An RNA of 207 nucleotides, treated with 2A3 and read out base by base. For 2A3 the reverse transcriptase was SuperScript II with manganese.

RNA sequence: GGGAACGACUCGAGUAGAGUCGAAAAGCUUCAGGGAAACCAUGCUACUCCAAAUAAACACAGAGUCAAUUAAACAUGUGCCUUUGAUGUGGAAAGCCCAGGACCUCCACACUACUCUUCUGAGUUUAGGUCAGAGGUAAAGAUGCAGAUGGAUGCCCGCCUUACAGAAAUUCGUUUCUGUAAGGCGAAAAGAAACAACAACAACAAC
Reactivity to 2A3 in 0.01 (KOAc 150mM, MgCl2 10mM, bicine 150mM(pH8.5), 24C), signal-to-noise 1, nucleotides 027 to 156: g070c030u110u070c040a050g050g000g000a040a060a050c040c000a050u050g000c000u020a040c010u000c030c010a000a140a170u190a100a070a010c140a020c030a070g060a020g040u090c060a070a120u150u240a100a200a010c040a010u040g040u040g030c020c020u080u010u080g070a120u110g010u010g010g040a070a070a020g010c020c050c000a010g000g100a030c000c040u000c030c000a080c020a060c080u070a040c030u000c020u300u010c090u190g020a010g070u040u080u150a060g000g000u000c000a010g000a000g010g000u010a030a040a070g080a010u050g010c000a000g010a060u040g040g040a010u060g060c060c050